[RMDB]
About this RNA
Chemical mapping of a 177-nucleotide RNA with 2A3 and DMS. For DMS, 4,915 sequencing reads were counted. It was measured as part of the RMDB library OK2TRN.

RNA sequence: GGGAACGACUCGAGUAGAGUCGAAAAGCAAAUUGUGUGUGUGCUUAUGUACAUUUUUCUGGGGAUAACUUUGGUAGUUUUCAUCAGAUUCUUAAAGGUGUCUGUUUGCUAAAGCCAGAUUAAGAGCGCUAGGAUAACAUUUCGAUGUUAUCCUAGCAAAAGAAACAACAACAACAAC
Reactivity to 2A3 in 0.01 (KOAc 150mM, MgCl2 10mM, bicine 150mM(pH8.5), 24C), signal-to-noise 3, nucleotides 027 to 126: g020c020a030a080a130u220u110g060u010g050u010g010u010g000u030g060c010u190u130a090u180g040u030a020c030a100u030u060u030u080u000c020u010g040g000g010g030a060u080a190a040c000u020u020u110g080g010u050a030g060u050u030u210u000c010a040u020c000a020g030a070u000u050c030u060u210a210a170a060g200g000u010g020u000c020u020g040u060u110u060g000c000u020a060a010a020g020c010c010a010g020a040u070u050a110a030g010a020g090c070
Reactivity to DMS in 0.01 (KOAc 150mM, MgCl2 10mM, bicine 150mM(pH8.5), 24C), signal-to-noise 4, nucleotides 027 to 126: g010c060a080a070a090u000u000g010u000g020u010g020u010g020u000g010c020u000u000a050u010g020u000a060c080a110u000u000u000u000u000c010u000g010g010g000g000a110u000a060a280c040u010u000u000g030g020u000a040g010u010u000u010u010c070a040u000c010a020g000a040u000u000c050u000u000a090a100a130g010g010u010g010u000c020u000g010u000u000u010g010c040u000a020a030a100g020c030c010a040g010a060u000u000a060a080g010a120g020c250